Chemical mapping of a 177-nucleotide RNA with 2A3 and DMS.

RNA sequence: GGGAACGACUCGAGUAGAGUCGAAAAGAUAUCGGACAACACCUUCUACACACCCUACGAACGGACGGCGGAUGAAGUGAACAUCAUUGGGCGGAUUCGCUGGUUUGCUCGAGAGAUCUGAUGGGCGCUUGCAGGUCAAAUUCGUUUGACCUGCAAGAAAAGAAACAACAACAACAAC
Reactivity to 2A3 in 0.01 (KOAc 150mM, MgCl2 10mM, bicine 150mM(pH8.5), 24C), signal-to-noise 6, nucleotides 027 to 126: g090a010u100a070u110c060g020g010a030c030a080a000c010a080c020c000u040u040c040u090a020c030a010c000a020c060c010c020u070a080c070g050a090a020c020g020g060a010c000g030g020c020g030g010a030u040g030a110a050g070u080g110a100a040c040a050u110c010a040u100u150g070g020g010c020g020g040a050u080u000c020g000c040u030g030g070u020u050u070g020c030u010c000g050a070g000a010g020a090u020c010u060g040a050u120g050g010g020c030g020
Reactivity to DMS in 0.01 (KOAc 150mM, MgCl2 10mM, bicine 150mM(pH8.5), 24C), signal-to-noise 3, nucleotides 027 to 126: g000a110u010a060u030c070g000g010a050c110a100a090c030a070c040c010u000u000c050u010a090c130a110c080a110c000c020c030u000a080c050g040a110a080c080g000g000a080c080g020g010c030g040g000a090u000g050a170a080g000u040g000a080a040c110a070u010c070a120u050u040g000g010g010c020g000g030a130u020u010c050g010c030u000g000g020u010u000u020g020c030u000c000g000a040g000a190g010a030u010c020u040g000a100u000g010g010g000c040g010

Background:
The DMS profile rests on 4,769 reads. For 2A3 the reverse transcriptase was SuperScript II with manganese.